An RNA of 177 nucleotides, treated with DMS and 2A3 and read out base by base. The reactions ran in a buffer of 150 mM KOAc, 10 mM MgCl2 and 150 mM bicine (pH 8.5), at 24 C. The DMS profile rests on 775 reads. It was measured as part of the RMDB library OK2TST.
RNA sequence: GGGAACGACUCGAGUAGAGUCGAAAAAUGUACAACUGGACAAAUCUCAUUAAGGUUUCAGGGAUUUUGUUUGCUCUGUGUCCAAGGCAUACAAUUUCAAGGAGGAUUGCAACAUUCCUGGCUUAAAGCUGUGAUACUUCUUCGGAAGUAUCACAGCAAAAGAAACAACAACAACAAC
Reactivity to DMS in 0.01 (KOAc 150mM, MgCl2 10mM, bicine 150mM(pH8.5), 24C), signal-to-noise 1, nucleotides 027 to 126: a030u010g020u000a030c090a140a060c130u000g030g000a020c030a050a030a040u000c020u030c050a150u010u000a090a110g020g000u000u010u000c030a080g010g000g010a070u000u000u000u000g020u000u000u000g030c010u010c060u000g000u000g010u020c030c050a040a130g000g020c170a050u010a040c170a080a030u010u000u020c120a110a190g000g000a090g010g000a100u000u010g010c070a070a030c150a060u020u000c010c000u000g010g000c020u010u000a090a090a130
Reactivity to 2A3 in 0.01 (KOAc 150mM, MgCl2 10mM, bicine 150mM(pH8.5), 24C), signal-to-noise 1, nucleotides 027 to 126: a000u060g000u040a020c020a240a130c140u140g040g100a030c010a000a150a120u050c000u000c020a120u120u130a130a060g130g050u120u170u150c020a000g000g000g000a000u030u090u020u050g060u000u000u110g020c020u040c020u050g030u000g010u010c050c000a050a020g010g000c030a080u140a140c030a050a110u060u090u230c070a080a030g080g010a010g030g060a100u030u140g060c020a000a020c010a070u000u010c000c000u020g120g000c000u090u090a150a020a050